[RMDB]
RNA sequence: GGGAACGACUCGAGUAGAGUCGAAAAGAUCUGGACACGACACGACUCAUGCCGGCCGUCACGGUAGUUCAGCCCGCUGACCAGGCCUGUACGGAUUGGCCGGUUGCCGCCGCCGAGGAUGACGAAGUAGGUUAUUGCCUUUCGAGGCAAUAACCUAAAAAGAAACAACAACAACAAC
Reactivity to DMS in 0.01 (KOAc 150mM, MgCl2 10mM, bicine 150mM(pH8.5), 24C), signal-to-noise 1, nucleotides 027 to 126: g050a060u010c020u000g000g000a090c020a120c130g040a100c050a040c070g020a010c090u040c050a160u040g000c020c100g010g000c020c000g020u000c000a070c030g000g000u000a000g030u000u010c070a120g020c110c000c160g000c020u000g000a020c010c060a120g000g000c050c010u000g020u010a090c130g000g000a010u000u030g040g010c000c000g030g000u000u000g000c030c040g020c100c070g040c000c010g040a070g010g040a090u000g020a110c060g000a070a080g000
Reactivity to 2A3 in 0.01 (KOAc 150mM, MgCl2 10mM, bicine 150mM(pH8.5), 24C), signal-to-noise 1, nucleotides 027 to 126: g090a050u030c060u070g030g050a030c030a000c090g020a000c040a020c010g080a040c000u000c030a040u140g010c000c000g070g010c010c000g000u000c020a020c140g060g000u040a070g010u050u030c010a010g000c030c010c020g040c060u080g020a050c000c000a050g110g000c000c010u060g010u110a040c050g080g010a070u110u150g010g030c010c020g030g000u020u060g000c000c030g000c000c020g000c000c000g020a060g000g110a060u000g000a010c020g000a120a030g070